This 170-nucleotide RNA was probed chemically with 2A3 and DMS. Conditions: 150 mM KOAc, 10 mM MgCl2 and 150 mM bicine (pH 8.5), 24 C. DMS (dimethyl sulfate) methylates the pairing face of unpaired adenines and cytosines.
RNA sequence: GGGAACGACUCGAGUAGAGUCGAAAAAAGACGCUGGUGGACUCUUGGAAUGGGAAAGAGGAGGGCGGAAAAAGAGGAGCGGGCCUCCCGAUCCGAGGGGCCCGGUGGCCUGAUCUGGAGGGCACUCAUAGCAGCCUCUUCGGAGGCUGCAAAAGAAACAACAACAACAAC
Reactivity to 2A3 in 0.01 (KOAc 150mM, MgCl2 10mM, bicine 150mM(pH8.5), 24C), signal-to-noise 2, nucleotides 027 to 129: a000a000g070a000c030g010c110u100g000g030u060g010g000a030c000u030c030u080u060g000g050a080a040u030g020g020g000a090a010a000g030a030g000g020a020g000g000g000c030g040g030a070a000a000a010a000g100a060g030g020a040g020c000g020g020g040c010c000u020c000c000c010g030a080u060c020c040g000a060g010g020g000g000c000c000c000g000g030u040g010g000c000c050u030g020a130u080c020u050g050g010a090g030g010g000c020a000c020u130c010a020u040a050
Reactivity to DMS in 0.01 (KOAc 150mM, MgCl2 10mM, bicine 150mM(pH8.5), 24C), signal-to-noise 3, nucleotides 027 to 129: a060a020g050a040c160g030c070u010g010g040u030g010g010a040c080u030c000u040u010g000g000a030a000u020g000g040g060a040a030a020g000a040g000g000a000g070g010g000c180g030g020a050a010a040a090a060g030a060g040g000a180g070c100g000g010g020c000c000u010c050c010c070g010a000u030c120c160g020a090g040g000g040g060c030c030c030g000g060u080g060g070c050c030u020g020a160u010c070u020g000g000a070g020g000g050c030a140c080u050c000a000u030a120
The DMS profile rests on 5,190 reads.